Structure probing data (2A3) for a 207-nucleotide construct. It was measured as part of the RMDB library OK3TST. The RNA was probed in 150 mM KOAc, 10 mM MgCl2 and 150 mM bicine (pH 8.5) at 24 C. For 2A3 the reverse transcriptase was SuperScript II with manganese.

[RMDB]
RNA sequence: GGGAACGACUCGAGUAGAGUCGAAAAACUCAGUCUGCACAGUAAAAUGGACACAAAAACUCAUCUUCUGUCUUUAUAGCGUGGUUGGCUGAAAUGAGACAAUGCAUAUAAAAUGCUGAGUGCACUGGGGAAGUUAAGUGGAUGUGCUUGGCUUGUAGAUAAAAUGGGUCUUCGGACCCAUUUUAUCAAAAGAAACAACAACAACAAC
Reactivity to 2A3 in 0.01 (KOAc 150mM, MgCl2 10mM, bicine 150mM(pH8.5), 24C), signal-to-noise 1, nucleotides 027 to 156: a000c010u010c030a020g070u100c070u070g000c000a010c000a010g040u090a000a040a090a090u190g030g090a080c050a010c020a090a040a130a090a000c070u050c070a050u010c150u160u020c000u060g030u010c010u090u100u040a150u140a140g070c140g000u030g080g070u170u060g020g000c050u020g010a030a000a010u080g030a000g000a030c050a060a040u060g000c090a010u120a010u070a200a220a020a040u050g020c000u010g040a050g030u000g060c010a000c060u030g000g000g000g010a040a030g030u160u160a000a050g010u020g030g070a150u110g040u070g030c000u000u050g080g040c000u020u010g030u180a020